[RMDB]
RNA sequence: GGGAACGACUCGAGUAGAGUCGAAAACAUGCACACACCUUUUGUAAAGUUCUGAAUACAGAGGAGUUUUGGGGAGUUGGCUGCAGAACAGCCUUUCCUGUGUUCCGGCUCAUCACUCGCAGGGCUGGAAAGUUCAUCUUCCAGGGUGUUUGUCCAACACCGAUUUACCAUUCGUGGUAAAUCGGUGAAAAGAAACAACAACAACAAC
Reactivity to 2A3 in 0.01 (KOAc 150mM, MgCl2 10mM, bicine 150mM(pH8.5), 24C), signal-to-noise 3, nucleotides 027 to 156: c020a010u120g020c020a010c000a000c000a030c030c030u050u090u190u140g120u130a100a100a090g060u130u050c070u090g080a080a050u090a080c030a020g050a050g040g010a040g030u080u130u190u260g020g030g000g000a050g020u100u040g050g000c000u030g040c080a050g030a120a030c010a000g000c000c000u010u030u020c000c010u020g000u000g000u100u010c000c000g010g010c010u000c020a170u060c020a050c060u070c030g100c150a030g000g010g040c000u000g000g020a000a000a030g030u090u170c020a070u010c100u060u020c030c030a010g030g000g030u030g000u040u010u020g040u000c020c010a050a000
Reactivity to DMS in 0.01 (KOAc 150mM, MgCl2 10mM, bicine 150mM(pH8.5), 24C), signal-to-noise 1, nucleotides 027 to 156: c060a090u000g040c030a090c050a110c060a020c000c000u010u000u040u000g030u020a050a060a120g020u000u000c110u010g020a150a150u000a100c050a030g030a060g010g000a080g000u010u010u000u000g070g010g000g000a080g070u000u000g010g020c030u000g050c060a170g000a020a300c010a030g010c000c030u000u000u000c000c020u020g040u010g030u000u000c020c050g030g050c030u010c050a050u020c080a120c050u040c090g020c050a040g010g010g020c030u000g000g010a000a010a100g010u010u000c110a060u000c030u000u000c000c030a030g000g010g000u000g000u000u000u000g020u020c010c040a040a300
This 207-nucleotide RNA was probed chemically with 2A3 and DMS. DMS adducts were read by reverse transcription with MarathonRT. The RNA was probed in 150 mM KOAc, 10 mM MgCl2 and 150 mM bicine (pH 8.5) at 24 C.